[RMDB]
RNA sequence: GGGAACGACUCGAGUAGAGUCGAAAACUUAUCGGGACAACAACCCAACGCGGCAGGUGUACCAUGUACCAUUGGGCAAAACGUUUACUGGCGCGUUUCGAUUGAGGUAGUUUCGACGCGGACAAGGUUGUUCCUCGCAUUUCGAUGCGAGGAACAAAAAAGAAACAACAACAACAAC
Reactivity to DMS in 0.01 (KOAc 150mM, MgCl2 10mM, bicine 150mM(pH8.5), 24C), signal-to-noise 1, nucleotides 027 to 126: c180u000u090a050u010c000g040g000g000a040c150a150a000c300a070a020c000c110c000a040a000c100g000c000g000g000c000a030g020g040u040g050u010a010c030c000a110u000g100u000a120c300c300a090u000u010g000g090g040c000a110a060a100a100c110g000u000u050u090a030c010u000g000g000c000g000c000g000u000u000u000c070g010a120u020u190g000a000g000g070u010a010g030u000u000u000c060g000a130c020g000c140g000g000a000c000a090a140g000g000
Reactivity to 2A3 in 0.01 (KOAc 150mM, MgCl2 10mM, bicine 150mM(pH8.5), 24C), signal-to-noise 1, nucleotides 027 to 126: c050u060u060a010u010c110g000g000g070a100c010a270a010c000a000a040c200c000c000a000a000c020g000c030g010g000c000a000g000g000u040g000u030a280c030c000a000u000g000u090a120c070c070a140u010u030g000g030g000c020a050a000a000a280c040g000u080u110u110a000c000u100g000g140c000g000c000g000u000u000u000c110g200a300u000u210g000a120g000g000u030a020g030u040u050u050c000g000a000c000g000c120g080g000a050c000a000a020g110g000